[RMDB]
RNA sequence: GGGAACGACUCGAGUAGAGUCGAAAAGAAAACUGCAGUAGUAGCAGGUAAUACUACUAAAAACGUCAAGAGAAGACGGUAAUCUCUUAAAGAACGCGGAAAGGACGCGGUAAUCCUUUCAAAGAAAGGGAAACAAUAUCUUCGGAUAUUGUUUCCCAAAAGAAACAACAACAACAAC
Reactivity to 2A3 in 0.01 (KOAc 150mM, MgCl2 10mM, bicine 150mM(pH8.5), 24C), signal-to-noise 1, nucleotides 027 to 126: g190a000a170a000a000c000u000g000c040a000g060u050a000g000u000a000g090c000a000g020g030u070a040a000u000a000c040u000a020c000u000a000a220a000a000a000c140g090u110c050a050a000g000a000g030a300a000g010a000c000g000g170u100a000a000u000c010u000c020u040u190a000a240a110g010a040a000c000g080c010g000g040a000a000a000g000g000a070c070g000c000g000g000u020a000a010u000c000c010u000u050u030c150a290a230a000g050a090a040a000
Reactivity to DMS in 0.01 (KOAc 150mM, MgCl2 10mM, bicine 150mM(pH8.5), 24C), signal-to-noise 1, nucleotides 027 to 126: g030a120a050a090a290c000u000g000c020a120g040u040a050g040u000a040g020c050a000g000g040u050a110a000u000a040c030u060a000c000u090a000a090a060a190a110c000g000u010c060a060a080g030a100g000a020a090g000a020c000g000g000u040a010a000u010c080u040c030u030u000a090a090a180g000a090a300c000g000c070g000g000a050a000a000g000g000a000c100g030c030g000g070u010a030a050u010c000c000u020u020u000c040a120a140a050g000a020a080a060

An RNA of 177 nucleotides, treated with 2A3 and DMS and read out base by base. Values are in units of 0.01, from 0 to 300, in steps of 10. For DMS the reverse transcriptase was MarathonRT. The RNA was probed in 150 mM KOAc, 10 mM MgCl2 and 150 mM bicine (pH 8.5) at 24 C. It was measured as part of the RMDB library OK1LIB. Reactivities are given for positions 27 through 126.